[RMDB]
RNA sequence: GGGAACGACUCGAGUAGAGUCGAAAAUUUUCCAGAUGUUGCAUACAUAACUUUUUUUAUUUGUAUUCGAACUAGUCCAAGCCGAUUCUCAAAAUCAUAUAAAAUCAUUUACACCUUGGUCAUGGUACGUGAUAAGGUAGUUCGCUACCUUAUCACGAAAAGAAACAACAACAACAAC
Reactivity to DMS in 0.01 (KOAc 150mM, MgCl2 10mM, bicine 150mM(pH8.5), 24C), signal-to-noise 1, nucleotides 027 to 126: u010u000u000u000c030c010a160g020a090u000g000u000u000g010c070a030u020a030c020a020u010a070a080c120u000u000u000u000u030u000u000a130u000u010u020g000u000a080u000u000c060g020a070a030c080u000a050g000u010c030c040a010a080g000c060c050g000a100u000u030c040u010c030a070a030a100a090u010c040a060u000a080u010a070a040a120a080u040c030a110u010u010u000a030c110a030c080c020u000u000g040g000u000c040a060u000g000g000u010a080

Chemical mapping of a 177-nucleotide RNA with DMS. The DMS profile rests on 722 reads. Values cover nucleotides 27 to 126. The reactions ran in a buffer of 150 mM KOAc, 10 mM MgCl2 and 150 mM bicine (pH 8.5), at 24 C.